Overview:
Chemical mapping of a 177-nucleotide RNA with 2A3 and DMS. For DMS, 1,712 sequencing reads were counted. The data come from the RNA Mapping Database (RMDB), library OK2TST. For 2A3, 813 sequencing reads were counted. Values cover nucleotides 27 to 126. For 2A3 the reverse transcriptase was SuperScript II with manganese.
[RMDB]
RNA sequence: GGGAACGACUCGAGUAGAGUCGAAAAGAUCUCUAGAAUAUCCCAAUAGGUGUUCCGGAGAAUCAGUAAAGAACACUCCACCUAUAGGAUUCUUAAUAUGAUACGCAGUGCUAACUGGCAGACAACAAUUUGGUAAACUGUUCGCAGUUUACCAAAUAAAAGAAACAACAACAACAAC
Reactivity to 2A3 in 0.01 (KOAc 150mM, MgCl2 10mM, bicine 150mM(pH8.5), 24C), signal-to-noise 1, nucleotides 027 to 126: g010a080u060c010u000c010u030a010g020a110a000u040a060u070c060c030c050a010a010u110a080g030g030u090g030u190u040c110c000g010g000a030g020a000a090u050c010a010g040u130a000a130a150g000a050a000c030a020c110u000c030c010a060c000c000u030a030u090a040g040g000a020u030u030c000u000u050a080a060u230a090u270g110a020u020a120c040g020c050a040g010u020g000c030u090a100a110c020u050g100g000c030a000g010a050c000a060a000c000a050
Reactivity to DMS in 0.01 (KOAc 150mM, MgCl2 10mM, bicine 150mM(pH8.5), 24C), signal-to-noise 3, nucleotides 027 to 126: g000a080u000c010u000c050u010a060g000a050a040u010a090u010c020c010c070a160a100u000a110g010g030u000g020u000u020c130c090g000g000a030g030a090a110u010c040a100g020u010a080a090a110g000a080a070c100a130c040u000c050c020a090c050c030u000a050u010a200g010g010a070u000u010c020u010u000a060a110u020a070u000g010a090u020a060c090g000c030a040g010u000g000c100u010a070a070c070u000g000g000c030a050g020a070c060a040a050c110a040